RNA sequence: GGGAACGACUCGAGUAGAGUCGAAAAGAUAUGGACGUCCUAGGGAGAGGACCCAUCGGAAACGAUGGGUCUCGAGGAUCUAGAGACGUCCUAAGUCAAAAGUGAACCACGUUCGCGUGGUUCACAACGGAGAUAGAGAGUUCGCUCUCUAUCUCCGAAAAGAAACAACAACAACAAC
Reactivity to 2A3 in 0.01 (KOAc 150mM, MgCl2 10mM, bicine 150mM(pH8.5), 24C), signal-to-noise 2, nucleotides 027 to 126: g020a010u030a010u090g000g000a000c000g000u000c000c010u010a000g020g070g070a300g060a040g050g070a060c000c010c000a000u000c010g000g000a010a000a000c010g000a000u000g010g010g010u000c000u010c000g000a030g090g100a140u020c000u000a010g040a070g000a140c010g000u010c010c000u000a000a010g020u000c010a040a010a050a050g010u020g000a000a000c000c000a000c010g010u060u060c290g040c020g140u010g000g000u000u000c000a010c000a000a010
Reactivity to DMS in 0.01 (KOAc 150mM, MgCl2 10mM, bicine 150mM(pH8.5), 24C), signal-to-noise 2, nucleotides 027 to 126: g000a020u000a080u010g000g000a020c000g030u000c000c000u000a020g030g020g020a150g010a240g000g010a020c000c000c000a000u000c000g030g000a020a010a040c000g010a020u000g000g000g000u000c000u000c030g000a160g010g000a170u000c000u010a000g000a190g010a010c010g020u000c000c000u000a000a030g010u010c020a120a110a160a130g010u000g010a030a000c000c000a010c000g020u000u000c250g020c030g000u010g000g000u010u000c000a000c020a050a070

The data come from the RNA Mapping Database (RMDB), library TTRDES. Chemical mapping of a 177-nucleotide RNA with 2A3 and DMS. For DMS the reverse transcriptase was MarathonRT. For 2A3 the reverse transcriptase was SuperScript II with manganese. The reactions ran in a buffer of 150 mM KOAc, 10 mM MgCl2 and 150 mM bicine (pH 8.5), at 24 C.